An RNA of 177 nucleotides, treated with 2A3 and DMS and read out base by base. The 2A3 profile rests on 1,047 reads. High 2A3 reactivity points to a flexible backbone, as in loops and unpaired stretches. Reactivities are given for positions 27 through 126. The DMS profile rests on 835 reads.
RNA sequence: GGGAACGACUCGAGUAGAGUCGAAAAGAUGUGAAGCAGUGAUGAGAAACUGGAUCUGACUGGCUGUGCUGAGUUUGUUCAAUCCAACCCUGAGCUUCACGUUAAAACCCCCUUCUUCGGAAGGGGGGACUGACCAAUCGUUCGCGAUUGGUCAGUCAAAAGAAACAACAACAACAAC
Reactivity to 2A3 in 0.01 (KOAc 150mM, MgCl2 10mM, bicine 150mM(pH8.5), 24C), signal-to-noise 1, nucleotides 027 to 126: g120a040u120g030u010g020a020a000g040c020a040g170u090g120a160u060g020a010g090a080a110a020c110u030g010g000a010u020c080u060g010a010c000u000g030g000c010u040g030u150g170c120u210g040a030g040u000u090u060g050u050u010c010a010a010u020c000c000a030a110c010c010c000u000g010a000g000c000u030u020c000a000c010g010u030u070a050a100a040a120c000c010c000c020c050u000u000c010u050u050c150g050g000a000a000g010g000g010g010g000
Reactivity to DMS in 0.01 (KOAc 150mM, MgCl2 10mM, bicine 150mM(pH8.5), 24C), signal-to-noise 1, nucleotides 027 to 126: g000a030u010g010u000g000a010a020g010c000a220g020u000g000a140u000g000a110g000a100a130a190c180u000g010g000a010u000c090u000g020a030c040u000g000g000c000u010g020u000g030c260u000g020a020g010u010u000u010g000u000u000c020a050a040u000c000c010a010a150c020c010c010u000g020a080g010c000u000u000c000a010c000g030u000u000a050a100a200a210c000c010c000c000c000u000u000c000u000u010c140g040g000a010a000g010g000g020g010g010